[RMDB]
RNA sequence: GGGAACGACUCGAGUAGAGUCGAAAACGGUACUAUGAAUUGAUGCAAGGUGUGGAGCGACCUUUAACAGUUCUGGUGGUGCUCUGAAUGGAGUGCUCUACUGAGAUUAUAAAAUAGAAGGUAAGCUGAAGGGGAAAUGAGUUCGCUCAUUUCCCAAUCUGCAUCCUAAGUUCGCUUAGGAUGCAGAAAAAGAAACAACAACAACAAC
Reactivity to 2A3 in 0.01 (KOAc 150mM, MgCl2 10mM, bicine 150mM(pH8.5), 24C), signal-to-noise 4, nucleotides 027 to 156: c020g030g040u090a050c030u070a100u170g040a060a050u130u060g050a050u100g060c050a040a000g000g000u040g000u070g030g010a010g000c020g010a010c000c000u020u040u050a110a050c030a030g000u010u020c020u030g060g040u020g030g000u010g000c000u030c020u060g140a100a080u240g010g010a020g000u030g000c020u000c020u060a040c020u030g030a010g010a100u080u060a060u170a110a090a030a020u080a030g070a050a010g040g000u050a050a040g030c040u060g130a040a050g000g000g000g000a000a000a000u000g000a010g040u030u110c170g040c060u000c000a000u000u000u000c000c000c000a000a000
Reactivity to DMS in 0.01 (KOAc 150mM, MgCl2 10mM, bicine 150mM(pH8.5), 24C), signal-to-noise 1, nucleotides 027 to 156: c040g010g020u000a040c040u000a140u010g000a140a110u000u010g030a110u000g020c090a060a020g010g020u000g060u000g010g000a100g000c040g040a110c010c030u000u000u000a120a190c020a080g010u010u000c030u010g030g040u000g000g030u000g000c010u000c110u010g000a140a100u000g060g010a120g030u000g030c000u010c050u000a040c020u000g000a120g020a060u000u000a180u010a020a060a070a140u010a060g000a070a100g000g010u010a040a100g010c050u000g020a070a160g010g000g010g020a020a010a010u000g010a080g040u010u000c300g030c000u000c000a020u000u000u000c010c010c000a010a050

Annotation
This 207-nucleotide RNA was probed chemically with 2A3 and DMS. 2A3 adducts were read by reverse transcription with SuperScript II with manganese. Conditions: 150 mM KOAc, 10 mM MgCl2 and 150 mM bicine (pH 8.5), 24 C. Source: RMDB library M2RFPK, as collected in RNAgym. For DMS the reverse transcriptase was MarathonRT.